Source: RMDB library OK1LIB, as collected in RNAgym. Structure probing data (2A3 and DMS) for a 177-nucleotide construct. Values cover nucleotides 27 to 126. Conditions: 150 mM KOAc, 10 mM MgCl2 and 150 mM bicine (pH 8.5), 24 C.
[RMDB]
RNA sequence: GGGAACGACUCGAGUAGAGUCGAAAAGUCGAGUCCGCGGUGUCGCUCGGUUCGCCGGAAUGUCGCCGCCGCGUCCGGCGCGGUCAUGAUCGUGAUGACGUCCAACCCGUCGGCGCGGUGAACGGCGACCGAGCGCAUUGUUCGCAAUGCGCUCGGUAAAAGAAACAACAACAACAAC
Reactivity to 2A3 in 0.01 (KOAc 150mM, MgCl2 10mM, bicine 150mM(pH8.5), 24C), signal-to-noise 9, nucleotides 027 to 126: g060u040c010g000a010g040u050c070c050g020c050g040g050u100g070u150c040g010c050u020c030g040g030u160u060c040g030c040c010g020g070a160a100u170g040u090c030g020c060c010g000c000c000g000c010g070u120c010c010g000g020c020g020c180g020g000u040c060a110u240g040a190u170c050g060u110g160a260u250g110a090c020g010u020c040c010a020a020c000c000c000g000u010c000g000g000c000g000c000g000g000u000g000a020a000c010g000g000c000g000
Reactivity to DMS in 0.01 (KOAc 150mM, MgCl2 10mM, bicine 150mM(pH8.5), 24C), signal-to-noise 6, nucleotides 027 to 126: g020u010c030g000a090g000u010c050c030g020c050g000g010u010g000u030c040g020c020u010c050g010g010u010u010c030g020c010c000g010g010a100a060u030g010u000c050g030c090c020g000c010c010g000c010g000u030c010c010g000g020c010g000c190g010g000u000c080a110u020g010a040u030c020g010u000g010a140u030g010a080c110g020u000c030c170a280a090c020c010c000g020u000c000g000g010c010g000c010g010g000u000g000a080a120c050g010g000c010g010